Chemical mapping of a 207-nucleotide RNA with DMS and 2A3. The DMS profile rests on 2,244 reads. DMS adducts were read by reverse transcription with MarathonRT. Reactivities are given for positions 27 through 156.
RNA sequence: GGGAACGACUCGAGUAGAGUCGAAAAGAUAGCUACGGCGUACUGCCACAGCUUCUGAGCCCCGUUCUUACGAGGACCGACAUCGCACAACUGACGCACGAGGUUCUGGUCCCACAUAACGCGGCUCAGAUUGACAGACGGCCAUGUUUUUGGGUUAAGUGGUGUUUUAAUUCGUUAAAACACCACUAAAAGAAACAACAACAACAAC
Reactivity to DMS in 0.01 (KOAc 150mM, MgCl2 10mM, bicine 150mM(pH8.5), 24C), signal-to-noise 1, nucleotides 027 to 156: g000a120u000a040g010c060u000a050c050g060g080c020g030u000a100c000u000g000c010c020a060c110a030g030c120u000u020c010u020g030a090g010c010c000c010c010g070u000u000c040u020u000a070c070g020a190g040g000a040c000c000g000a030c030a040u000c040g100c010a110c040a090a300c120u000g050a210c190g020c060a100c000g000a070g000g030u000u000c010u000g080g000u010c000c000c010a130c090a040u000a050a050c000g030c070g000g030c020u000c000a030g000a070u000u000g020a100c000a100g010a150c030g000g030c000c020a200u010g000u000u010u000u000u100g030g030g010u000u030a070
Reactivity to 2A3 in 0.01 (KOAc 150mM, MgCl2 10mM, bicine 150mM(pH8.5), 24C), signal-to-noise 2, nucleotides 027 to 156: g080a070u170a020g050c080u090a060c100g000g000c030g060u190a130c050u100g060c050c030a060c050a060g040c000u040u000c000u000g000a000g010c000c010c030c000g010u040u020c030u080u110a090c160g040a190g010g000a000c000c000g010a000c000a040u040c010g010c040a040c040a200a300c170u300g130a110c130g010c090a000c020g030a010g000g020u060u050c110u160g030g000u010c000c010c000a060c000a040u100a010a000c010g000c010g000g000c000u010c000a000g010a010u010u050g030a030c010a000g050a030c020g090g030c040c000a080u050g060u010u030u020u020u040g080g000g000u100u140a060